Source information:
Conditions: 150 mM KOAc, 10 mM MgCl2 and 150 mM bicine (pH 8.5), 24 C. Chemical mapping of a 177-nucleotide RNA with 2A3 and DMS. For DMS, 1,326 sequencing reads were counted. For 2A3 the reverse transcriptase was SuperScript II with manganese. For DMS the reverse transcriptase was MarathonRT. Source: RMDB library VIROID, as collected in RNAgym.

RNA sequence: GGGAACGACUCGAGUAGAGUCGAAAACCUCCUUCGGAUGCCCAGGUCGGACCGCGAGGAGGUGGAGAUGCCAUGCCGACCCGAAGAGGAAAGAAGGACGCGAGACGCAAACCCGUGAGUGGAAACCCCACUAUCUUUUGUUCGCAAAAGAUAGUGGAAAAGAAACAACAACAACAAC
Reactivity to 2A3 in 0.01 (KOAc 150mM, MgCl2 10mM, bicine 150mM(pH8.5), 24C), signal-to-noise 1, nucleotides 027 to 126: c010c010u030c010c060u020u060c000g140g020a160u260g080c010c030c030a090g180g020u160c020g050g010a050c000c010g020c060g010a080g010g060a020g020g010u040g000g010a060g030a020u170g000c000c000a020u070g030c000c020g040a030c000c000c020g090a150a020g090a060g030g000a130a000a000g070a060a030g070g010a010c080g020c050g010a040g000a000c020g000c080a070a050a070c010c000c030g010u040g050a030g010u100g000g040a050a090a050c000c000
Reactivity to DMS in 0.01 (KOAc 150mM, MgCl2 10mM, bicine 150mM(pH8.5), 24C), signal-to-noise 2, nucleotides 027 to 126: c060c000u000c000c000u000u000c030g010g000a150u010g020c030c020c050a110g020g010u000c100g050g010a170c030c030g010c210g020a040g000g010a010g010g000u000g010g000a150g020a090u000g000c030c020a090u000g000c050c010g010a050c050c020c030g020a090a060g000a100g000g000a050a080a090g020a110a080g010g050a040c030g010c050g000a030g000a040c040g000c040a070a080a110c050c020c020g000u000g010a080g020u010g000g010a140a110a160c080c150